Chemical mapping of a 207-nucleotide RNA with 2A3 and DMS. For DMS the reverse transcriptase was MarathonRT. For DMS, 2,495 sequencing reads were counted.

[RMDB]
RNA sequence: GGGAACGACUCGAGUAGAGUCGAAAACGGUUGCGCGCUUUUGUGUAAGCUUUAGAUCGCGACUGCUACGGCUAGGCGGACCGCUCCAGGCUGGCAACAGAGCAGGGAAUAGCUGACGCUCAGACUGACUAGCAAGACUGCAGAUGUAGCUUGAACCCCAUAUGAAUGACUUCGGUCAUUCAUAUGGAAAAGAAACAACAACAACAAC
Reactivity to 2A3 in 0.01 (KOAc 150mM, MgCl2 10mM, bicine 150mM(pH8.5), 24C), signal-to-noise 4, nucleotides 027 to 156: c040g000g000u030u050g030c030g000c010g020c050u090u010u050u100g100u050g050u120a070a030g020c010u060u110u100a060g010a060u110c020g010c020g030a030c030u070g020c000u060a030c020g040g040c030u040a060g000g050c010g050g040a060c020c030g020c010u040c020c000a030g060g000c010u020g000g030c000a060a020c020a100g040a030g040c030a040g060g000g040a080a080u070a080g020c030u040g050a040c040g000c030u030c010a010g020a140c020u030g020a060c030u030a020g020c020a050a030g060a070c040u040g000c010a010g010a190u060g050u080a010g010c020u010u030g040a060a060c020c020
Reactivity to DMS in 0.01 (KOAc 150mM, MgCl2 10mM, bicine 150mM(pH8.5), 24C), signal-to-noise 2, nucleotides 027 to 156: c030g030g000u000u000g010c020g030c060g000c020u030u000u000u200g020u000g010u000a060a140g030c080u000u000u000a050g000a080u000c040g040c040g000a170c030u040g030c020u000a120c040g000g010c010u000a140g030g020c000g030g010a100c060c000g020c010u000c060c020a080g030g030c040u010g000g000c070a070a160c070a090g020a080g030c020a130g020g000g020a060a060u000a070g020c010u000g000a130c110g050c020u010c010a120g030a130c030u000g030a100c080u010a110g030c010a050a130g010a130c060u020g010c010a120g010a020u010g010u000a050g000c000u010u020g000a140a090c100c030
For 2A3 the reverse transcriptase was SuperScript II with manganese. Conditions: 150 mM KOAc, 10 mM MgCl2 and 150 mM bicine (pH 8.5), 24 C. Source: RMDB library ARCHII, as collected in RNAgym.